Record summary: Chemical mapping of a 177-nucleotide RNA with DMS and 2A3. Conditions: 150 mM KOAc, 10 mM MgCl2 and 150 mM bicine (pH 8.5), 24 C. Source: RMDB library OK1LIB, as collected in RNAgym. The 2A3 profile rests on 10,341 reads. Values cover nucleotides 27 to 126. 2A3 adducts were read by reverse transcription with SuperScript II with manganese.
RNA sequence: GGGAACGACUCGAGUAGAGUCGAAAACGGUGGCUGUGCUUUUUGGAGGGUCUUCUGAUGGUAGUUUGGCGCUUCUGCAUAGUGAUGUGGAUGUAGAUUUGAGGGGGAGGAGAGUGAGGAUAAUAUCCCCUUUAAUACGUUUCGACGUAUUAAAGGGAAAAGAAACAACAACAACAAC
Reactivity to DMS in 0.01 (KOAc 150mM, MgCl2 10mM, bicine 150mM(pH8.5), 24C), signal-to-noise 6, nucleotides 027 to 126: c080g010g020u020g000g000c040u000g010u010g010c040u000u010u010u010u020g010g020a110g000g000g010u010c040u000u010c040u000g000a070u020g010g020u010a060g010u010u030u020g010g020c060g000c050u010u010c010u000g010c030a050u010a100g020u020g020a110u010g020u010g000g000a050u010g010u020a070g010a080u010u010u010g010a100g000g000g000g010g010a050g020g010a080g000a080g010u010g020a090g000g010a060u020a050a080u020a210u020c090
Reactivity to 2A3 in 0.01 (KOAc 150mM, MgCl2 10mM, bicine 150mM(pH8.5), 24C), signal-to-noise 9, nucleotides 027 to 126: c040g030g010u040g020g000c020u030g030u060g050c050u060u080u040u100u130g060g020a040g010g040g030u020c010u080u030c030u090g090a110u080g070g040u050a080g030u040u060u130g040g000c050g000c020u020u030c010u040g010c010a060u040a110g140u170g090a080u060g030u050g010g040a040u050g030u110a060g040a190u050u070u170g070a070g010g020g000g000g020a030g010g010a030g000a010g040u070g030a060g000g030a010u040a140a040u060a120u110c010